[RMDB]
RNA sequence: GGGAACGACUCGAGUAGAGUCGAAAAAAAGAUAUGGAGCAUCAUCACGAGGAUUGACGUUUGACGACAAGUCGGAAACGACUUGUCCGAGUCAAUCUCCCCACCGUGUUGAUGCUCCUAAGUCAAAGACAGUACAAAAGUUCGCUUUUGUACUGUCAAAAGAAACAACAACAACAAC
Reactivity to 2A3 in 0.01 (KOAc 150mM, MgCl2 10mM, bicine 150mM(pH8.5), 24C), signal-to-noise 2, nucleotides 027 to 126: a000a020a010g030a010u030a010u040g000g000a010g010c010a000u000c000a000u010c010a000c020g020a020g040g020a000u000u000g000a000c040g140u260u250u300g030a010c010g000a000c010a000a000g000u000c000g000g000a000a020a000c000g000a000c000u010u010g000u010c000c000g000a010g000u000c000a000a000u020c010u020c000c000c000c000a030c000c010g000u010g000u010u010g000a000u000g000c010u000c000c000u000a010a000g000u000c000a000a000a030
Reactivity to DMS in 0.01 (KOAc 150mM, MgCl2 10mM, bicine 150mM(pH8.5), 24C), signal-to-noise 5, nucleotides 027 to 126: a080a090a120g000a010u000a040u010g000g000a010g030c000a010u000c000a000u000c000a000c000g010a260g020g000a020u000u000g010a010c020g010u000u010u000g030a280c300g000a010c010a010a010g000u000c000g000g000a010a010a020c000g000a010c000u010u000g010u000c000c010g000a070g030u010c000a010a010u000c000u010c040c030c000c020a300c070c010g010u010g010u000u000g000a010u000g010c000u000c000c000u000a000a030g000u000c000a130a100a090